[RMDB]
RNA sequence: GGGAACGACUCGAGUAGAGUCGAAAAACUGGCCCCUUAGGGGAGGACCUCCCUUUGGGAAGGCCUCUGUUGAAUUUGUCUGGCAAAGAGAAACAACUUCCUGAGCUGCCUGUUUGAUAACCCUUCAUAUGGAGAGUCUUUUCGAAGACUCUCCAUAAAAAGAAACAACAACAACAAC
Reactivity to DMS in 0.01 (KOAc 150mM, MgCl2 10mM, bicine 150mM(pH8.5), 24C), signal-to-noise 3, nucleotides 027 to 126: a040c020u000g010g020c010c090c220c000u000u000a050g000g000g000g000a010g000g000a090c060c020u000c020c000c000u020u010u090g000g000g010a040a030g000g020c000c000u000c030u000g000u010u000g030a140a180u010u010u000g010u000c000u020g000g070c190a110a140a030g000a070g030a060a030a080c020a030a030c010u050u050c000c010u000g010a030g000c220u010g020c000c000u000g000u010u000u000g020a100u020a120a110c020c030c020u040u020c080a150
Reactivity to 2A3 in 0.01 (KOAc 150mM, MgCl2 10mM, bicine 150mM(pH8.5), 24C), signal-to-noise 3, nucleotides 027 to 126: a010c030u050g010g020c000c000c000c000u000u020a000g000g010g020g010a020g000g070a170c000c000u000c020c010c000u040u040u120g020g000g000a050a030g000g000c000c010u000c040u040g040u020u040g030a110a180u040u020u070g110u050c020u020g140g040c090a120a160a040g030a020g030a040a050a010c010a000a030c050u080u030c010c000u000g000a000g030c020u020g020c010c020u020g030u020u040u040g080a140u120a130a120c000c020c000u110u190c070a070
Structure probing data (DMS and 2A3) for a 177-nucleotide construct. 2A3 adducts were read by reverse transcription with SuperScript II with manganese. It was measured as part of the RMDB library RFM100. For DMS, 4,296 sequencing reads were counted. Reactivities are given for positions 27 through 126.